[RMDB]
RNA sequence: GGGAACGACUCGAGUAGAGUCGAAAACGAUUAAGGGAGAAGACUGCAUCAAUGAUUUUGCGGCUUUUGCCGUUGUACGGUUGCCUAAAGAACGGGUGCAGGAGCAUCUGUGGAAGGAGGCGGAGGAAUGAAGUACACUCGCGAAAGUAUCAUCGCACUGAUCUUCUCCUUUCGAGGAGAAGAUCAGAAAAGAAACAACAACAACAAC
Reactivity to 2A3 in 0.01 (KOAc 150mM, MgCl2 10mM, bicine 150mM(pH8.5), 24C), signal-to-noise 2, nucleotides 027 to 156: c040g030a020u100u060a060a120g010g000g050a050g030a050a120g070a170c020u030g020c010a050u110c030a010a300u200g050a180u190u090u090u140g030c010g000g000c000u070u120u270u300g000c000c000g010u000u160g050u050a030c030g010g000u060u070g000c000c000u090a140a080a000g050a060a000c000g010g000g010u060g000c030a010g010g000a000g000c000a030u030c000u020g030u060g020g070a020a110g010g020a000g080g010c050g010g000a020g070g000a090a070u060g020a010a000g000u010a040c000a050c050u030c100g000c020g010a010a220a000g110u060a070u130c110a020u050c050g010c000a050